[RMDB]
RNA sequence: GGGAACGACUCGAGUAGAGUCGAAAAGAUAUGGAGUUUGAUACGUUAUUUCAGGGAGGGAGACCUGUUUCGGAAACGAAACUGGUCAUCGAUCUCCCUGAAAUAACGUAUCAAUGACUCCUAAGUCCCGUUAUCAUGAGUUCGCUCAUGAUAACGGAAAAGAAACAACAACAACAAC
Reactivity to DMS in 0.01 (KOAc 150mM, MgCl2 10mM, bicine 150mM(pH8.5), 24C), signal-to-noise 1, nucleotides 027 to 126: g020a110u010a230u000g020g020a020g050u000u000u000g010a010u000a010c010g000u010u000a000u000u000u000c000a000g030g000g010a030g020g000g000a080g010a000c000c000u000g020u000u000u000c010g010g000a090a110a300c000g000a020a000a010c010u010g000g030u000c010a150u010c230g000a090u000c010u010c010c000c000u000g020a000a000a000u000a000a000c000g030u000a000u000c000a030a030u010g000a090c000u000c000c000u000a050a160g000u010c050